The record gives the reactivity of an RNA of 207 nucleotides to 2A3.
RNA sequence: GGGAACGACUCGAGUAGAGUCGAAAAGGAGGCGGCCGGGAUAGCACAUAUCAGUCGGAUAAUUGUGCAAGUUGAUCGCUUCGGCGGUUUAAUUUGGCGGUGCCAUCAGGAUUUACUCGCACAUUGUGGCCGUUCCCUCGGGGAUGGAGUGUGUCCUGUGUUUCUUAUUGUUCGCAAUAAGAAACACAAAAGAAACAACAACAACAAC
Reactivity to 2A3 in 0.01 (KOAc 150mM, MgCl2 10mM, bicine 150mM(pH8.5), 24C), signal-to-noise 1, nucleotides 027 to 156: g040g000a050g020g000c060g010g000c010c020g100g060g000a040u110a060g020c010a000c010a030u040a010u050c110a050g110u130c110g080g000a030u060a090a090u140u050g000u010g040c020a050a000g010u010u060g050a020u020c010g000c030u050u050c170g050g000c020g000g000u000u020u190a060a080u110u080u070g080g050c020g000g000u040g030c030c000a040u100c010a030g040g000a010u040u030u110a060c050u040c060g000c000a030c010a090u000u200g040u150g070g000c010c020g000u050u030c030c000c000u020c100g040g000g000g000a020u030g030g000a030g030u110g020u040g020u050c000c020u000
For 2A3 the reverse transcriptase was SuperScript II with manganese. The RNA was probed in 150 mM KOAc, 10 mM MgCl2 and 150 mM bicine (pH 8.5) at 24 C.